Chemical mapping of a 177-nucleotide RNA with 2A3 and DMS. Source: RMDB library OK2TRN, as collected in RNAgym. Reactivities are rounded to 0.1 and cut off at 0 and 3. The reactions ran in a buffer of 150 mM KOAc, 10 mM MgCl2 and 150 mM bicine (pH 8.5), at 24 C. Reactivities are given for positions 27 through 126. The DMS profile rests on 1,753 reads.
[RMDB]
RNA sequence: GGGAACGACUCGAGUAGAGUCGAAAAAUGUUCUCUUUGAAUUACUCCAAUGUCGACAAAUUUGGACGAAAUGACCAUCCAUUGAUAAAGAGAAAUGGUGAGUAUGUGAUAAACUCCACACUUGAUCUCCUGUACGACUAUUCGUAGUCGUACAGGAAAAAGAAACAACAACAACAAC
Reactivity to 2A3 in 0.01 (KOAc 150mM, MgCl2 10mM, bicine 150mM(pH8.5), 24C), signal-to-noise 1, nucleotides 027 to 126: a000u150g000u040u010c000u000c000u000u030u040g150a120a090u120u000a030c000u030c000c030a080a110u120g120u210c050g140a040c050a030a210a130u080u000u070g030g020a080c050g060a110a070a000u150g050a050c030c000a030u010c040c050a010u000u130g100a060u110a210a120a010g040a000g000a000a050a000u040g050g020u030g000a050g030u140a040u190g050u060g060a090u090a150a070a070c020u000c050c030a050c000a030c040u000u060g120a150u090c040
Reactivity to DMS in 0.01 (KOAc 150mM, MgCl2 10mM, bicine 150mM(pH8.5), 24C), signal-to-noise 3, nucleotides 027 to 126: a070u010g020u010u000c010u000c030u000u020u000g000a110a140u000u000a140c230u000c010c030a010a030u040g000u000c190g000a150c230a070a150a110u000u000u010g000g000a030c030g000a050a050a060u010g000a210c100c040a030u020c030c030a050u000u000g010a100u000a030a050a050g000a070g010a040a030a030u010g000g000u000g010a070g030u000a050u000g000u000g010a130u000a070a100a100c110u010c040c020a060c070a040c090u020u020g010a160u000c100